[RMDB]
RNA sequence: GGGAACGACUCGAGUAGAGUCGAAAAAGCGAGAGCCAGAUCCCCACUCACCUGGGCUGAGACAUUGGCCUGAAGUUCUCGCAGUAGCUGCCCCUGGUGUAGAAUCUGGAGCCUCAAGGGAACCUGGGUUAGUCCUGCAAGGCCGCACAUGUGGGCACACUAUGACGUGAUUCGUCACGUCAUAGUGAAAAGAAACAACAACAACAAC
Reactivity to DMS in 0.01 (KOAc 150mM, MgCl2 10mM, bicine 150mM(pH8.5), 24C), signal-to-noise 2, nucleotides 027 to 156: a120g020c000g010a040g000a070g030c000c010a120g010a110u010c030c010c000c080a140c040u000c080a090c110c010u010g030g010g000c000u010g030a070g000a160c190a170u000u000g000g000c010c000u010g000a130a080g030u010u000c010u000c010g010c050a300g020u000a070g010c060u000g000c030c000c010c040u000g020g070u000g020u000a060g010a200a120u030c100u020g050g010a140g030c020c000u010c040a090a300g040g000g000a020a030c010c050u010g030g020g010u000u000a150g010u000c020c000u000g020c240a070a060g020g020c010c030g000c020a070c060a090u020g030u010g010g030g000c010a220
Reactivity to 2A3 in 0.01 (KOAc 150mM, MgCl2 10mM, bicine 150mM(pH8.5), 24C), signal-to-noise 3, nucleotides 027 to 156: a010g020c020g000a030g040a010g010c020c020a040g010a130u130c010c000c030c000a040c010u070c010a060c000c080u150g000g060g000c050u040g020a030g020a100c130a180u080u160g030g030c010c000u030g040a080a010g030u030u010c010u000c020g000c020a010g080u110a040g000c070u030g030c010c000c000c010u110g000g200u010g020u030a110g060a120a080u080c090u120g050g010a030g030c000c010u030c040a040a030g000g010g000a030a040c030c100u150g040g020g000u040u100a050g040u040c010c010u030g030c040a020a010g000g000c010c010g000c000a040c000a020u090g040u240g010g000g020c020a010